This 207-nucleotide RNA was probed chemically with DMS and 2A3. 2A3 is a SHAPE reagent: it acylates the 2'-hydroxyl of flexible nucleotides of all four kinds. It was measured as part of the RMDB library RNAMAK. DMS adducts were read by reverse transcription with MarathonRT.
RNA sequence: GGGAACGACUCGAGUAGAGUCGAAAAACUACCUUCGGGUAGUAGAGCUGCGUACUACUCUAGGAGGGAAUGGGAGUGGUUCUCCCAAAUAGGAGAAUCCACGAAGAACAUUCCUACCCACCCUAGAGUAUCGCGAUGAAAGGGAUUCGUCCCUUAACUCUGCUACAUAAUUCGUUAUGUAGCAGAGAAAAGAAACAACAACAACAAC
Reactivity to DMS in 0.01 (KOAc 150mM, MgCl2 10mM, bicine 150mM(pH8.5), 24C), signal-to-noise 3, nucleotides 027 to 156: a040c000u000a020c000c020u010u000c290g080g040g020u000a010g020u000a020g000a160g010c030u020g010c020g030u000a130c040u010a010c030u010c010u000a020g010g000a300g030g010g030a020a020u000g000g000g020a280g020u020g030g020u000u000c000u010c000c000c010a040a070a120u020a040g010g010a050g020a040a040u000c000c000a100c040g000a120a140g030a120a140c010a030u000u010c000c000u000a030c030c040c050a300c110c020c000u000a050g000a050g000u000a010u010c030g030c060g000a040u000g010a150a110a060g000g000g010a090u000u000c070g030u000c000c000c000u000u020a030a180
Reactivity to 2A3 in 0.01 (KOAc 150mM, MgCl2 10mM, bicine 150mM(pH8.5), 24C), signal-to-noise 4, nucleotides 027 to 156: a000c000u010a010c020c010u020u070c200g120g010g000u020a010g000u050a030g050a030g070c170u140g000c030g050u110a110c040u000a010c000u000c020u010a000g000g010a030g030g010g010a000a020u010g010g010g030a080g010u010g020g000u020u000c010u030c010c000c010a110a200a080u260a040g010g000a000g010a010a050u100c020c000a010c030g040a130a030g020a020a000c010a000u020u010c010c000u040a110c050c040c010a050c020c000c000u010a010g000a000g000u010a020u080c000g000c020g000a030u190g120a060a040a000g010g000g020a030u070u100c170g070u090c110c000c000u020u020a040a030